[RMDB]
RNA sequence: GGGAACGACUCGAGUAGAGUCGAAAAGGGUCCCGCAGAACCCGAUGGAGUCCCCCACCAUCCCUUCCGGAUGAAACUGGUCCCGAUAGGGGCACCCACAAUAGGAUGGCAAAAGGGGACCAUCGGGAUAGUGGGUUGUUCGCAACCCACAAAAGAAACAACAACAACAAC
Reactivity to 2A3 in 0.01 (KOAc 150mM, MgCl2 10mM, bicine 150mM(pH8.5), 24C), signal-to-noise 5, nucleotides 027 to 129: g120g020g000u050c000c030c000g000c010a070g030a160a090c030c010c010g020a000u020g020g100a120g200u060c000c000c000c000c000a030c000c000a000u070c000c000c000u260u180c050c040g000g130a170u150g040a130a030a000c050u170g050g030u010c000c000c010g030a120u270a300g010g010g000g000c010a010c000c000c000a010c020a020a020u000a060g000g000a000u000g000g020c050a020a000a080a120g000g000g000g000a010c000c000a010u000c010g000g000g010a000u020a000
Reactivity to DMS in 0.01 (KOAc 150mM, MgCl2 10mM, bicine 150mM(pH8.5), 24C), signal-to-noise 2, nucleotides 027 to 129: g030g030g120u020c000c000c000g000c110a120g030a100a070c010c010c000g030a030u020g070g000a300g000u020c010c010c010c000c150a040c020c020a010u000c000c000c000u020u130c080c090g000g030a120u070g040a060a070a040c100u050g000g000u000c000c000c020g060a190u000a120g000g000g010g000c050a070c000c000c000a040c100a170a070u010a150g000g010a030u020g010g000c130a000a050a130a110g000g000g000g000a050c010c000a000u010c020g050g060g000a000u030a010